[RMDB]
Source: RMDB library TTRDES, as collected in RNAgym. Chemical mapping of a 177-nucleotide RNA with DMS and 2A3. The reactions ran in a buffer of 150 mM KOAc, 10 mM MgCl2 and 150 mM bicine (pH 8.5), at 24 C. For 2A3 the reverse transcriptase was SuperScript II with manganese.
RNA sequence: GGGAACGACUCGAGUAGAGUCGAAAAGAUAUGGACUCCUUUAUGGGAGUGGCAGGAUCGGAAACGAUCCUGUCCCACAUCGAUCAUAUGGGAGUCCUAAGUCAAAAGGGAUGCUUCGGCAUCCCAAGAACUACCAUGAGUUCGCUCAUGGUAGUUCAAAAGAAACAACAACAACAAC
Reactivity to DMS in 0.01 (KOAc 150mM, MgCl2 10mM, bicine 150mM(pH8.5), 24C), signal-to-noise 3, nucleotides 027 to 126: g010a020u000a230u020g000g010a030c000u000c000c010u000u010u000a010u010g000g000g020a130g050u010g000g020c010a000g000g010a000u010c000g020g000a090a070a100c000g020a000u000c010c000u000g000u010c170c040c050a040c070a240u000c250g020a130u020c000a000u010a000u010g010g000g020a020g000u000c000c000u000a010a050g000u000c020a130a060a140a150g000g010g020a010u000g020c000u000u000c260g030g000c000a010u000c000c000c010a010a040
Reactivity to 2A3 in 0.01 (KOAc 150mM, MgCl2 10mM, bicine 150mM(pH8.5), 24C), signal-to-noise 3, nucleotides 027 to 126: g010a010u010a020u090g000g000a000c000u000c000c000u020u030u030a050u040g150g020g080a300g120u070g030g000c000a010g000g010a010u000c010g000g000a030a010a000c000g000a010u020c000c000u000g020u000c000c010c000a160c020a140u300c150g260a180u150c000a000u030a010u020g040g000g010a000g000u030c010c000u000a010a000g010u000c010a030a000a050a170g020g020g010a010u020g000c020u050u160c300g200g000c010a010u000c000c000c000a000a000